[RMDB]
RNA sequence: GGGAACGACUCGAGUAGAGUCGAAAAACAGGAUGCGAGCCACGCUUCGAGUUUGCGCUUCAUUGGAAAAUGGACCUGUGGCUUGGUCUAAAAUCGAUAUCGCUUUCCGUAUACUCUUCUAAAAAUAACGUGGUCAUACGUUCGCGUAUGACCACGUAAAAGAAACAACAACAACAAC
Reactivity to 2A3 in 0.01 (KOAc 150mM, MgCl2 10mM, bicine 150mM(pH8.5), 24C), signal-to-noise 2, nucleotides 027 to 126: a000c140a050g120g000a020u180g120c000g000a000g140c010c010a000c030g000c020u000u040c140g040a050g050u150u180u160g060c080g000c020u060u100c000a050u000u130g020g080a090a000a000a090u050g000g000a000c040c000u090g040u000g070g110c020u020u000g000g030u000c020u020a120a000a000a030u140c040g000a000u020a020u050c050g000c000u060u060u000c000c000g020u080a180u000a100c180u020c000u170u040c270u300a230a050a000a120a230u240a230
Chemical mapping of a 177-nucleotide RNA with 2A3. 2A3 adducts were read by reverse transcription with SuperScript II with manganese. The reactions ran in a buffer of 150 mM KOAc, 10 mM MgCl2 and 150 mM bicine (pH 8.5), at 24 C. For 2A3, 615 sequencing reads were counted.